[RMDB]
The data come from the RNA Mapping Database (RMDB), library TTRDES. Chemical mapping of a 177-nucleotide RNA with 2A3 and DMS. Reactivities are given for positions 27 through 126. Reactivities are rounded to 0.1 and cut off at 0 and 3.
RNA sequence: GGGAACGACUCGAGUAGAGUCGAAAAGAUAUGGACCUAGCGUGCAGAGAACUGACUCGGAAACGAGUUUGUUCGACGAAGCACGAACUACUAGGUCCUAAGUCAAAGAAUGCCUUCGGGCAUUCAACAUCUGUUACGUCUUCGGACGUAACAGAUGAAAAGAAACAACAACAACAAC
Reactivity to 2A3 in 0.01 (KOAc 150mM, MgCl2 10mM, bicine 150mM(pH8.5), 24C), signal-to-noise 2, nucleotides 027 to 126: g050a000u040a030u090g000g000a000c000c000u000a010g000c030g000u020g010c050a100g040a000g000a300a020c010u010g020a010c000u000c020g010g020a010a040a030c020g000a010g010u000u000u030g020u000u010c020g040a110c120g120a280a030g000c000a000c010g020a070a060c130u290a020c010u010a060g000g010u000c000c000u010a010a000g010u020c020a040a030a160g010a010a000u010g000c050c000u050u020c300g100g000g000c010a020u050u030c000a000a010
Reactivity to DMS in 0.01 (KOAc 150mM, MgCl2 10mM, bicine 150mM(pH8.5), 24C), signal-to-noise 3, nucleotides 027 to 126: g020a050u000a300u020g000g000a000c000c000u010a000g000c000g020u010g060c000a150g000a210g030a010a000c000u000g010a010c020u000c000g030g030a120a080a160c010g020a010g020u000u000u010g030u000u000c010g020a130c290g000a100a100g010c000a010c010g000a080a060c100u010a300c010u000a000g010g010u000c000c000u000a000a100g010u000c010a120a110a200g020a010a000u000g000c010c000u020u000c200g030g000g000c020a020u000u010c000a150a280